[RMDB]
RNA sequence: GGGAACGACUCGAGUAGAGUCGAAAAGAUAUGGAUCCACUGAUCGGGAGUCGUCACAUCGGAAACGAUGUGCGACGAAGAACGGUUUGGUGGAUCCUAAGUCAAAAGGUUGCGUUCGCGCAACCAAGCUAUUUAACGAGUUCGCUCGUUAAAUAGCAAAAGAAACAACAACAACAAC
Reactivity to DMS in 0.01 (KOAc 150mM, MgCl2 10mM, bicine 150mM(pH8.5), 24C), signal-to-noise 3, nucleotides 027 to 126: g000a040u000a300u000g000g010a000u000c000c000a000c000u000g000a020u000c000g000g000g020a110g020u000c000g020u010c030a000c000a010u000c000g000g000a150a070a160c010g010a010u000g020u000g000c020g010a010c000g010a040a100g010a130a220c030g010g010u000u010u010g060g010u000g000g000a010u000c000c000u000a020a070g010u010c020a080a060a130a060g000g000u000u000g000c000g000u000u000c200g020c040g010c010a000a000c000c010a040a070
Reactivity to 2A3 in 0.01 (KOAc 150mM, MgCl2 10mM, bicine 150mM(pH8.5), 24C), signal-to-noise 5, nucleotides 027 to 126: g030a000u080a030u150g000g000a000u010c000c010a000c000u030g010a020u010c020g030g010g040a070g010u020c020g260u300c030a000c000a010u000c010g040g030a100a050a030c010g000a000u000g000u000g000c000g010a000c000g010a030a010g020a010a040c020g000g120u080u140u300g060g010u010g000g000a000u000c000c000u000a020a010g030u020c010a050a000a030a170g010g000u000u010g000c000g030u040u120c300g000c020g000c140a000a000c000c000a000a000

This 177-nucleotide RNA was probed chemically with DMS and 2A3. The 2A3 profile rests on 12,951 reads. Values cover nucleotides 27 to 126. The reactions ran in a buffer of 150 mM KOAc, 10 mM MgCl2 and 150 mM bicine (pH 8.5), at 24 C.